This 177-nucleotide RNA was probed chemically with DMS and 2A3.
RNA sequence: GGGAACGACUCGAGUAGAGUCGAAAAUGACGCAGGCGCUCCUCGACGUCGCGGCGGGCACUGAGAUCGGUGAAGAAACCGACGAUGUGGGUCGCCUCGCCAUUGCCGUCGCGCAGCAGGUUGAGCAGGGUAUGAUUUAGUUCGCUAAAUCAUACCCAAAAGAAACAACAACAACAAC
Reactivity to DMS in 0.01 (KOAc 150mM, MgCl2 10mM, bicine 150mM(pH8.5), 24C), signal-to-noise 3, nucleotides 027 to 126: u000g010a090c060g030c110a100g000g010c000g000c080u000c050c050u000c020g020a080c070g000u000c040g010c100g000g030c030g010g020g010c010a010c030u000g020a300g000a100u000c000g000g000u000g010a170a100g010a060a130a070c040c010g010a030c020g000a140u010g000u000g000g010g000u000c060g010c030c000u000c040g010c020c030a080u000u000g010c030c020g030u000c060g010c010g010c100a060g000c060a040g000g020u020u000g010a070g020c180a180
Reactivity to 2A3 in 0.01 (KOAc 150mM, MgCl2 10mM, bicine 150mM(pH8.5), 24C), signal-to-noise 2, nucleotides 027 to 126: u120g030a030c070g040c080a020g040g020c000g000c020u020c020c000u020c020g050a020c040g030u070c010g010c000g020g000c000g000g000g050c020a000c030u050g020a040g010a300u060c000g040g020u000g060a170a180g070a240a160a010c000c000g000a000c010g010a050u040g030u060g030g030g120u040c060g010c000c030u030c020g000c000c010a070u010u140g000c010c000g050u030c020g010c000g000c010a030g000c000a020g080g090u080u100g040a050g050c060a050
The 2A3 profile rests on 2,720 reads.
The reactions ran in a buffer of 150 mM KOAc, 10 mM MgCl2 and 150 mM bicine (pH 8.5), at 24 C.
DMS adducts were read by reverse transcription with MarathonRT.
For DMS, 2,984 sequencing reads were counted.
It was measured as part of the RMDB library OK2TST.
Values cover nucleotides 27 to 126.